Record summary: The record gives the reactivity of an RNA of 177 nucleotides to DMS. DMS adducts were read by reverse transcription with MarathonRT. The DMS profile rests on 4,138 reads.

RNA sequence: GGGAACGACUCGAGUAGAGUCGAAAAGAUAUGGAAUACCCGGAUCGGUAUCCUGAACUACAGCAUUUACUUCGGAAACGAAGUAACCUCGGGCUGCAGGAGUACCGAUCCGGGUAUUCCUAAGUCAGAAUAUAGAAUGGUUCGCCAUUCUAUAUUCAAAAGAAACAACAACAACAAC
Reactivity to DMS in 0.01 (KOAc 150mM, MgCl2 10mM, bicine 150mM(pH8.5), 24C), signal-to-noise 4, nucleotides 027 to 126: g010a040u000a300u000g000g000a030a020u000a010c010c000c000g040g000a010u000c000g000g010u000a080u000c020c010u000g000a100a060c140u020a300c030a020g010c030a140u000u000u010a000c010u000u000c000g010g000a110a110a260c000g000a020a010g000u000a010a030c300c150u010c290g010g020g010c020u000g000c020a000g000g010a030g010u000a000c000c000g010a000u000c010c010g000g000g000u000a000u000u000c000c000u000a020a090g020u010c030a130